[RMDB]
RNA sequence: GGGAACGACUCGAGUAGAGUCGAAAAAUAAAUGAUGAGUUAACGCUCAUCAAAGUAACGAAAGAUGGCGAUUCGGUACACAUGGAAACAUGCGCCAAACGGAUAAAUACACAGAAUCGGAAAAAAAUCUCAUAUCUUGAUUCGUCAAGAUAUGAGAAAAAGAAACAACAACAACAAC
Reactivity to 2A3 in 0.01 (KOAc 150mM, MgCl2 10mM, bicine 150mM(pH8.5), 24C), signal-to-noise 2, nucleotides 027 to 126: a000u050a020a030a050u060g010a010u010g000a000g020u030u120a100a020c070g020c010u000c000a010u000c010a000a020a000g040u000a080a020c050g020a180a020a050g140a110u120g140g070c020g020a020u020u040c010g040g010u060a020c030a000c000a020u020g010g000a000a090a000c000a020u010g020c050g020c040c000a130a120a000c050g000g000a030u050a070a080a010u060a010c030a000c020a090g040a030a010u040c000g070g010a040a050a020a000a020a020a080
Reactivity to DMS in 0.01 (KOAc 150mM, MgCl2 10mM, bicine 150mM(pH8.5), 24C), signal-to-noise 3, nucleotides 027 to 126: a040u010a060a080a140u000g010a000u000g000a010g010u000u010a150a160c300g000c010u000c000a010u000c000a030a030a120g010u020a080a110c130g030a090a050a070g010a100u010g000g020c010g020a020u000u000c010g000g010u000a070c000a040c020a010u000g000g000a130a080a110c010a010u000g010c010g010c010c000a020a070a080c280g000g020a250u000a010a010a130u000a010c010a020c050a090g000a010a010u000c020g030g010a000a000a010a120a040a050a100